[RMDB]
Structure probing data (DMS and 2A3) for a 177-nucleotide construct. Conditions: 150 mM KOAc, 10 mM MgCl2 and 150 mM bicine (pH 8.5), 24 C. 2A3 adducts were read by reverse transcription with SuperScript II with manganese.

RNA sequence: GGGAACGACUCGAGUAGAGUCGAAAAUAACAUUCUAGGUGUCAUUUUGAACAAGACAAAGGUCGAUAAAUCUUCUAGUUAUUAUCACUAUUAUGGAGAUGAAUAAGUAUGAUUGAUAUUCAUAACCAAAGUUGCCCUAUUUCGAUAGGGCAACUUUAAAAGAAACAACAACAACAAC
Reactivity to DMS in 0.01 (KOAc 150mM, MgCl2 10mM, bicine 150mM(pH8.5), 24C), signal-to-noise 2, nucleotides 027 to 126: u000a050a060c050a040u010u100c130u050a080g030g020u000g020u040c040a010u000u000u000u010g000a190a050c070a210a200g020a090c020a080a080a090g030g020u000c040g000a030u000a040a030a020u030c010u000u000c020u010a040g000u000u010a060u020u000a060u000c030a070c090u010a100u020u000a050u070g010g000a030g020a020u000g000a030a040u020a000a070g010u020a010u040g000a000u010u000g000a010u030a070u000u030c000a060u050a090a130c100c030
Reactivity to 2A3 in 0.01 (KOAc 150mM, MgCl2 10mM, bicine 150mM(pH8.5), 24C), signal-to-noise 1, nucleotides 027 to 126: u010a000a200c050a060u020u010c080u000a290g010g020u080g020u100c010a050u000u000u050u160g010a020a020c000a040a080g010a000c090a020a170a020g120g120u150c000g000a000u000a040a070a000u000c000u250u000c000u130a040g080u170u020a000u160u050a030u160c010a000c040u010a010u080u080a070u300g060g000a060g000a090u080g000a020a160u070a210a000g230u080a010u040g200a210u000u110g000a000u000a040u050u000c000a000u000a040a010c000c000

Values cover nucleotides 27 to 126. For DMS, 1,778 sequencing reads were counted.